[RMDB]
RNA sequence: GGGAACGACUCGAGUAGAGUCGAAAAUUAUCAACAUGGCUUGUACGAUGGAUUCAUCCUGUUGUCUAAAUCUCUUUAGAAUGUUAUCAAUGAUGUAGUGGUUAUAUUCUCUGGAAUCGUACGAAGUAAUACUACGCAUUACGUCGACAAGAGUAUGGCUUACCUUCUUAUUCGUAAGAAGGUAAGCAAAAGAAACAACAACAACAAC
Reactivity to DMS in 0.01 (KOAc 150mM, MgCl2 10mM, bicine 150mM(pH8.5), 24C), signal-to-noise 4, nucleotides 027 to 156: u000u000a090u000c020a060a100c060a070u010g030g020c050u010u000g020u010a050c030g010a060u000g010g030a180u000u010c060a090u010c030c010u000g020u000u010g020u000c020u000a070a110a110u000c020u000c000u010u000u000a120g010a080a060u010g010u000u000a080u010c080a110a130u000g010a090u000g030u000a060g070u000g010g020u000u000a060u010a050u000u000c010u000c050u010g020g030a080a130u010c110g020u000a120c020g020a030a030g040u010a020a050u000a080c030u010a030c090g000c040a150u000u000a040c010g010u010c040g030a110c110a060a060g000a120g030u000a130u000g010
Reactivity to 2A3 in 0.01 (KOAc 150mM, MgCl2 10mM, bicine 150mM(pH8.5), 24C), signal-to-noise 4, nucleotides 027 to 156: u120u060a070u150c060a040a110c040a040u080g100g050c040u100u070g030u100a080c060g050a080u080g030g010a070u130u060c020a030u070c030c030u010g020u050u010g020u000c040u020a050a060a050u060c010u000c000u000u070u010a060g020a150a080u080g060u140u080a130u220c110a080a010u030g080a110u070g010u040a050g000u010g090g000u050u000a040u010a040u140u000c090u000c040u060g110g140a100a110u120c120g030u050a040c070g010a010a000g030u040a010a000u000a010c000u000a020c010g020c030a010u010u070a040c020g020u020c020g030a000c030a040a020g010a000g050u090a070u120g090